[RMDB]
RNA sequence: GGGAACGACUCGAGUAGAGUCGAAAAAGGGUGGGAGACAGAGACAGUUCAGGAGAGGGUCUGUCAGUCGACUGUGCUUUAGAAUAUGCAUCUUCGUUUGUGUUUCUUUUUGUCAUCUCACCAUGCAGGUACAUCGCGAGUUCGCUCGCGAUGUACCAAAAGAAACAACAACAACAAC
Reactivity to 2A3 in 0.01 (KOAc 150mM, MgCl2 10mM, bicine 150mM(pH8.5), 24C), signal-to-noise 1, nucleotides 027 to 126: a000g150g070g010u230g020g010g000a000g020a000c010a000g000a000g000a010c030a070g010u140u120c000a010g050g080a100g050a040g110g000g010u070c060u030g030u090c010a020g070u050c050g010a040c030u060g010u010g040c000u120u050u070a100g030a120a040u180a090u210g010c000a060u010c020u200u050c080g080u090u040u080g100u000g050u000u020u000c050u000u100u040u030u040g100u080c040a110u030c070u000c010a000c040c000a000u010g050c030a000
About this RNA: The record gives the reactivity of an RNA of 177 nucleotides to 2A3. For 2A3, 748 sequencing reads were counted. The RNA was probed in 150 mM KOAc, 10 mM MgCl2 and 150 mM bicine (pH 8.5) at 24 C.